[RMDB]
RNA sequence: GGGAACGACUCGAGUAGAGUCGAAAACGGGGGCGCAACGCCCUCGACCUAUUCUCAAACUUUAAAUAGGUAGGACGGCACGGCUGCUCCGGUGAGCCGUGCCAUGGAAUCGGGAGCUCCAAGUGGGAAGCCAGAAUCGAUUCGUCGAUUCUGGCUUAAAAGAAACAACAACAACAAC
Reactivity to DMS in 0.01 (KOAc 150mM, MgCl2 10mM, bicine 150mM(pH8.5), 24C), signal-to-noise 1, nucleotides 027 to 126: c000g000g010g000g000g070c050g010c130a140a080c300g000c000c000c000u000c000g000a000c130c000u000a180u000u010c000u000c060a190a140a060c000u010u020u040a120a050a060u030a000g000g000u000a030g000g010a160c190g010g000c000a000c000g000g010c010u000g000c080u010c120c040g000g050u010g020a000g000c030c000g140u000g040c000c000a000u020g010g040a090a020u000c030g000g000g000a130g000c030u000c060c010a060a060g030u030g000g010g000
Reactivity to 2A3 in 0.01 (KOAc 150mM, MgCl2 10mM, bicine 150mM(pH8.5), 24C), signal-to-noise 1, nucleotides 027 to 126: c010g010g000g000g000g000c000g000c080a150a090c210g000c020c000c000u000c000g020a000c000c000u000a030u030u000c100u040c020a140a190a040c130u300u300u270a040a160a120u170a120g020g040u000a010g120g110a060c040g040g000c000a000c010g000g050c000u030g020c030u000c010c060g000g030u060g070a000g000c010c000g000u000g000c000c000a000u000g000g020a000a000u010c030g000g000g010a000g000c010u000c000c090a090a000g100u050g120g000g080
The record gives the reactivity of an RNA of 177 nucleotides to DMS and 2A3. The DMS profile rests on 1,422 reads. Reactivities are given for positions 27 through 126. Conditions: 150 mM KOAc, 10 mM MgCl2 and 150 mM bicine (pH 8.5), 24 C. 2A3 adducts were read by reverse transcription with SuperScript II with manganese. Source: RMDB library RFM100, as collected in RNAgym.